This 177-nucleotide RNA was probed chemically with DMS and 2A3.

RNA sequence: GGGAACGACUCGAGUAGAGUCGAAAAGAUAUGGAUGGUCCUAGGGAGCUCGUCGGAAACGACCGUGAGCGAAGAACUAGGCCAUCCUAAGUCAAAAGCUGCAGUGAGGUUCGCCUCACUGCAGCAACGAAUAAUGAUACUUCGGUAUCAUUAUUCGAAAAGAAACAACAACAACAAC
Reactivity to DMS in 0.01 (KOAc 150mM, MgCl2 10mM, bicine 150mM(pH8.5), 24C), signal-to-noise 5, nucleotides 027 to 126: g000a040u000a300u010g000g010a010u010g000g000u010c000c010u000a010g010g000g000a100g010c000u000c000g010u010c000g010g010a090a090a160c170g010a070c040c300g040u000g000a020g020c000g000a080a130g000a100a150c010u000a010g010g000c000c000a000u000c000c000u000a000a060g010u000c040a090a060a130a140g000c010u000g010c000a000g000u000g000a030g010g000u000u010c220g000c020c000u000c000a000c010u000g000c010a000g010c000a010a030
Reactivity to 2A3 in 0.01 (KOAc 150mM, MgCl2 10mM, bicine 150mM(pH8.5), 24C), signal-to-noise 4, nucleotides 027 to 126: g010a010u090a040u150g000g000a010u010g010g070u300c000c010u000a000g020g010g020a040g010c000u000c020g190u040c030g110g080a200a210a200c140g130a120c070c060g200u090g030a000g020c030g060a140a030g000a020a000c000u000a010g010g000c000c000a000u000c000c000u000a000a010g010u010c030a040a050a080a180g000c010u010g000c000a010g000u000g000a010g040g060u080u170c290g120c060c000u000c010a000c000u000g000c000a000g000c000a000a000
Overview
2A3 adducts were read by reverse transcription with SuperScript II with manganese.